An RNA of 207 nucleotides, treated with 2A3 and read out base by base. Values are in units of 0.01, from 0 to 300, in steps of 10. The reactions ran in a buffer of 150 mM KOAc, 10 mM MgCl2 and 150 mM bicine (pH 8.5), at 24 C. Reactivities are given for positions 27 through 156.
[RMDB]
RNA sequence: GGGAACGACUCGAGUAGAGUCGAAAAGCGUACUACCAGCUCAAAAAGUAGAGCAACAGCGCUACAAAUUCCCAAAUAGGAAUUGUAGCGACAUGCUCUAUACAAAGAGCUGGUAUCGCAAAACGCUUGUCGUUAGCUUCGGCUAACGACAAGCGAACAAGUAUGGGUCCUUCGGGACCCAUACUUGAAAAGAAACAACAACAACAAC
Reactivity to 2A3 in 0.01 (KOAc 150mM, MgCl2 10mM, bicine 150mM(pH8.5), 24C), signal-to-noise 1, nucleotides 027 to 156: g000c000g000u020a030c020u000a000c020c010a000g010c020u000c010a120a160a100a000a000g030u020a000g000a010g060c010a060a050c080a100g070c030g010c000u000a000c010a000a300a120u030u040c080c010c030a140a180a190u260a130g000g000a000a010u000u000g000u000a000g000c000g140a100c010a030u020g000c000u020c000u000a020u000a010c030a010a110a050g010a010g000c030u000g000g010u090a000u090c000g020c000a000a000a100a100c020g030c000u010u000g000u000c010g000u000u000a000g020c000u000u060c210g080g000c010u020a040a010c020g020a010c010a000a000g000c000g010a000a000